[RMDB]
RNA sequence: GGGAACGACUCGAGUAGAGUCGAAAAGGAAAGCAAAUCCUUGGCAGUACCAUGUUGGAAGAUGAAUUCACACCUGAGGAUGUUAAUAUGCAGAUUAUGGGUGUGGUUAUGCAGAGUGGUGUGAGAAAUAGACUUUCGUUCGCGAAAGUCAAAAGAAACAACAACAACAAC
Reactivity to DMS in 0.01 (KOAc 150mM, MgCl2 10mM, bicine 150mM(pH8.5), 24C), signal-to-noise 4, nucleotides 027 to 129: g000g050a010a090a140g060c270a090a110a100u010c000c000u000u000g030g030c070a080g000u000a060c070c040a090u000g000u050u020g000g000a080a060g030a070u060g040a060a080u030u050c000a030c000a040c030c010u060g050a110g000g000a140u010g030u010u040a000a140u050a080u060g000c010a000g020a070u030u020a070u000g010g020g040u000g040u020g000g000u020u020a090u050g010c100a080g020a080g050u050g000g000u040g020u000g050a060g000a050a060a070u000a020
Reactivity to 2A3 in 0.01 (KOAc 150mM, MgCl2 10mM, bicine 150mM(pH8.5), 24C), signal-to-noise 5, nucleotides 027 to 129: g010g020a030a000a030g110c090a020a020a070u070c000c010u020u050g060g000c010a000g020u030a020c000c010a050u060g050u100u070g080g030a050a080g030a110u110g070a080a140u120u100c020a000c010a010c000c000u010g080a050g150g030a000u020g030u040u060a100a060u130a120u300g040c020a020g050a110u080u120a100u300g030g000g000u040g000u040g000g040u040u030a050u040g030c040a000g020a020g070u020g000g030u020g030u020g030a030g030a060a060a020u160a020
This 170-nucleotide RNA was probed chemically with DMS and 2A3. DMS adducts were read by reverse transcription with MarathonRT. The reactions ran in a buffer of 150 mM KOAc, 10 mM MgCl2 and 150 mM bicine (pH 8.5), at 24 C. It was measured as part of the RMDB library 15KLIB.